[RMDB]
RNA sequence: GGGAACGACUCGAGUAGAGUCGAAAACAGAGUCAACACCUGCUGGGCUGCCAACAGCUGAACCUUUUAAGUCCUACUUCGCCAAAGGAUUCCUCUCGAUAGAUUCAGGUUACUACUCAGCCAAAUGAGGUAUUUAAACUUUCGAGUUUAAAUACCUAAAAGAAACAACAACAACAAC
Reactivity to 2A3 in 0.01 (KOAc 150mM, MgCl2 10mM, bicine 150mM(pH8.5), 24C), signal-to-noise 3, nucleotides 027 to 126: c010a000g030a010g090u040c010a040a020c010a040c060c010u030g050c040u030g020g040g020c010u020g010c030c020a060a020c000a080g020c010u010g040a030a060c000c000u030u060u020u160a100a010g030u040c000c000u040a080c040u060u070c060g030c070c020a080a070a000g070g000a060u070u010c020c010u040c000u030c020g060a050u040a120g080a030u090u060c040a030g070g000u000u010a020c000u010a020c000u020c020a010g030c020c010a000a040a140u210g040
Reactivity to DMS in 0.01 (KOAc 150mM, MgCl2 10mM, bicine 150mM(pH8.5), 24C), signal-to-noise 5, nucleotides 027 to 126: c070a120g000a080g010u000c040a070a120c130a090c060c010u010g000c060u010g000g010g020c050u000g010c030c050a050a090c100a070g010c060u010g000a060a090c030c010u000u010u000u010a090a120g000u000c020c010u000a100c090u000u000c070g000c040c050a060a100a070g010g000a110u000u000c010c020u010c030u010c050g010a070u000a060g010a090u000u010c090a050g000g010u000u010a080c030u000a030c020u000c020a090g000c050c070a070a080a080u000g000